The record gives the reactivity of an RNA of 177 nucleotides to DMS and 2A3. The data come from the RNA Mapping Database (RMDB), library TTRDEL. Values cover nucleotides 27 to 126. For DMS, 1,897 sequencing reads were counted.

RNA sequence: GGGAACGACUCGAGUAGAGUCGAAAAGAUAUGGAGACGUUGGACAUGCUGGGCAGGGUCGGAAACGACCCGAUGCAGCAACAGCCACCGUCUCCUAAGUCAAAACGGAUUAGUUCGCUAAUCCGAACGAAAUAUCCGAGUUCGCUCGGAUAUUUCGAAAAGAAACAACAACAACAAC
Reactivity to DMS in 0.01 (KOAc 150mM, MgCl2 10mM, bicine 150mM(pH8.5), 24C), signal-to-noise 3, nucleotides 027 to 126: g000a020u000a220u010g030g000a040g010a010c010g000u010u000g000g020a030c050a260u000g020c000u000g010g000g050c170a290g010g010g010u000c010g050g000a050a040a120c030g020a020c000c010c010g000a050u030g030c000a000g010c000a040a060c200a100g000c010c000a000c020c000g010u000c000u010c000c000u000a000a050g030u000c020a080a110a150a230c030g000g010a030u000u000a020g000u000u020c280g000c010u000a020a010u010c010c000g000a050a050
Reactivity to 2A3 in 0.01 (KOAc 150mM, MgCl2 10mM, bicine 150mM(pH8.5), 24C), signal-to-noise 2, nucleotides 027 to 126: g010a010u020a000u070g010g010a000g000a000c030g000u010u010g050g020a110c140a260u300g030c020u030g000g160g100c080a080g080g000g000u010c010g030g010a020a020a010c000g000a020c000c010c000g010a000u050g090c000a000g030c010a050a030c070a020g030c000c000a010c000c000g030u000c000u010c000c000u000a010a000g020u010c000a000a060a060a100c020g010g000a010u000u010a010g070u060u050c300g000c160u010a010a000u000c000c000g010a090a010